[RMDB]
RNA sequence: GGGAACGACUCGAGUAGAGUCGAAAACAUUCUUUUACUGAUACAGGUUUUCUGUUGUUUAUCUGAACAGCAUCAAUCGGACAGACAUAUUCGCAGGCACCGCAUAAAACACAUGACCCUACACUGAACGGGACUAUACGUUCGCGUAUAGUCCCGUAAAAGAAACAACAACAACAAC
Reactivity to 2A3 in 0.01 (KOAc 150mM, MgCl2 10mM, bicine 150mM(pH8.5), 24C), signal-to-noise 2, nucleotides 027 to 126: c030a120u120u040c080u020u140u020u120a170c070u090g020a000u090a250c070a180g010g000u000u080u000u130c040u020g010u020u000g000u000u000u000a120u070c010u000g000a080a020c030a040g040c030a040u020c030a130a100u120c030g010g030a010c000a080g020a000c000a030u080a060u060u100c070g000c010a010g000g000c020a020c000c010g090c080a010u210a030a020a030a010c070a010c030a000u110g000a150c000c000c000u060a140c070a050c070u020g040a060
Reactivity to DMS in 0.01 (KOAc 150mM, MgCl2 10mM, bicine 150mM(pH8.5), 24C), signal-to-noise 1, nucleotides 027 to 126: c040a150u000u020c010u000u000u000u010a090c110u000g000a110u090a000c110a110g000g000u000u000u000u000c100u000g000u000u000g000u000u000u000a030u000c070u030g000a090a020c160a120g040c010a080u000c080a000a010u040c100g000g000a000c100a190g000a050c150a120u080a130u000u000c100g000c000a140g000g010c100a000c000c000g000c090a000u150a070a040a040a100c240a150c040a080u000g080a040c000c000c000u040a100c110a190c090u070g000a150